An RNA of 177 nucleotides, treated with DMS and 2A3 and read out base by base. The 2A3 profile rests on 2,101 reads. For DMS the reverse transcriptase was MarathonRT.

[RMDB]
RNA sequence: GGGAACGACUCGAGUAGAGUCGAAAAGAGCGUCGAGAGACGAAGAGAAGUGCAUAGAUCCACAACGGAGAACGUAAUAAUGCACGCAUGUGGUUUAGUGUCCGGAACAACGGGCACAAGAGGCAGAAUCCUGCGGUAUAUUCGUAUACCGCAGGAUAAAAGAAACAACAACAACAAC
Reactivity to DMS in 0.01 (KOAc 150mM, MgCl2 10mM, bicine 150mM(pH8.5), 24C), signal-to-noise 5, nucleotides 027 to 126: g000a090g010c010g030u010c010g000a260g000a230g000a010c020g000a080a060g000a120g000a110a120g040u000g000c010a010u000a100g000a160u010c000c000a150c170a080a130c130g000g020a120g020a140a130c060g010u030a060a090u040a090a050u010g000c030a000c010g000c140a110u010g000u020g000g020u010u000u020a040g000u000g020u000c010c010g000g000a090a120c300a150a160c000g000g020g010c010a000c000a030a040g010a080g000g000c060a070g000a130
Reactivity to 2A3 in 0.01 (KOAc 150mM, MgCl2 10mM, bicine 150mM(pH8.5), 24C), signal-to-noise 3, nucleotides 027 to 126: g070a000g020c000g010u000c010g000a040g010a020g020a130c010g040a070a020g060a010g020a210a040g000u010g000c000a040u070a020g060a170u070c020c020a060c030a120a170c250g060g010a060g070a070a000c040g030u010a060a040u080a110a000u070g000c010a010c020g000c010a030u060g000u060g050g140u010u040u180a000g000u000g000u010c000c000g000g000a090a040c060a010a030c010g000g000g000c000a000c000a000a010g070a010g040g110c070a010g030a030